[RMDB]
Record summary: This 177-nucleotide RNA was probed chemically with DMS and 2A3.

RNA sequence: GGGAACGACUCGAGUAGAGUCGAAAAUCUUGCACCUUCGGGUGCAAGAAAAUGUAAGCGCAUGCGAGCGCACAGCGCACGCUGAAAAACUGCGGAAAAGAAAAACUCAGCACUUCGGUGCUGAGAACACAAGAGUAUGGUUCGCCAUACUCUUGUGAAAAGAAACAACAACAACAAC
Reactivity to DMS in 0.01 (KOAc 150mM, MgCl2 10mM, bicine 150mM(pH8.5), 24C), signal-to-noise 4, nucleotides 027 to 126: u000c000u000u000g000c010a010c010c000u000u010c190g020g020g020u000g000c000a000a000g000a000a020a070a060u010g020u000a070a120g000c060g030c020a050u010g010c020g010a050g010c050g030c020a070c130a080g020c010g030c010a040c040g010c000u010g000a080a100a060a090a120c190u000g020c030g010g000a070a080a080a110g000a080a060a060a100a120c000u000c000a000g000c000a010c000u000u010c170g010g010u000g000c000u000g000a010g000a070a090
Reactivity to 2A3 in 0.01 (KOAc 150mM, MgCl2 10mM, bicine 150mM(pH8.5), 24C), signal-to-noise 3, nucleotides 027 to 126: u000c000u000u000g010c010a010c010c000u040u060c240g130g010g000u010g010c000a000a010g000a000a020a000a000u110g010u030a120a040g050c000g000c020a020u060g020c030g040a040g020c020g040c050a060c030a250g000c010g000c020a020c020g010c020u020g040a000a000a060a030a080c080u050g000c010g070g070a040a050a050a050g080a000a120a010a150a020c000u000c010a000g010c000a000c010u040u100c230g040g000u000g020c000u000g010a010g000a000a010
Annotation:
Values cover nucleotides 27 to 126. The RNA was probed in 150 mM KOAc, 10 mM MgCl2 and 150 mM bicine (pH 8.5) at 24 C.